[RMDB]
RNA sequence: GGGAACGACUCGAGUAGAGUCGAAAACAGCUCAGAGAUGAGCUGGAUCAGUGUGAACUGAUCGACGGCGUAGGAUCUCAAAAAGCCGGAGACCGUAGAGCGGUAUACGGUCUCUUUAGGAACUCUCUGUGGCGAGAGAGAGUCUCCAUUUGAGAGGUAUGCGUUGACAUUUCGAUGUCGACGCAUAAAAAGAAACAACAACAACAAC
Reactivity to 2A3 in 0.01 (KOAc 150mM, MgCl2 10mM, bicine 150mM(pH8.5), 24C), signal-to-noise 5, nucleotides 027 to 156: c000a000g000c000u000c000a020g010a020g020a160u030g000a000g000c000u010g000g010a000u000c000a000g020u010g030u050g150a070a040c000u010g000a000u010c020g060a060c060g010g020c010g010u040a070g060g120a130u010c010u000c020a020a040a040a040a010g030c010c000g010g000a000g000a000c010c000g000u000a010g020a040g150c090g030g030u090a050u000a060c000g000g000u000c000u000c000u020u040u050a030g000g000a010a010c000u000c000u000c000u020g060u100g140g020c090g010a040g000a000g000a000g000a010g070u020c080u000c100c010a030u030u040u040g020a030g000a010g010g050
Reactivity to DMS in 0.01 (KOAc 150mM, MgCl2 10mM, bicine 150mM(pH8.5), 24C), signal-to-noise 4, nucleotides 027 to 156: c000a040g000c000u000c010a060g030a300g000a300u000g010a010g020c000u000g010g010a010u000c020a010g020u000g010u000g000a230a060c020u010g010a020u000c000g010a110c040g010g010c040g000u010a150g010g000a100u000c010u010c010a030a070a080a120a130g020c120c100g010g010a050g010a030c000c010g030u000a030g000a160g040c090g020g030u000a080u000a010c010g000g010u000c000u000c000u010u000u000a090g000g000a100a140c000u000c010u000c000u000g030u000g040g020c140g030a140g010a050g000a030g010a060g010u000c030u010c000c010a210u000u000u010g010a050g010a070g010g020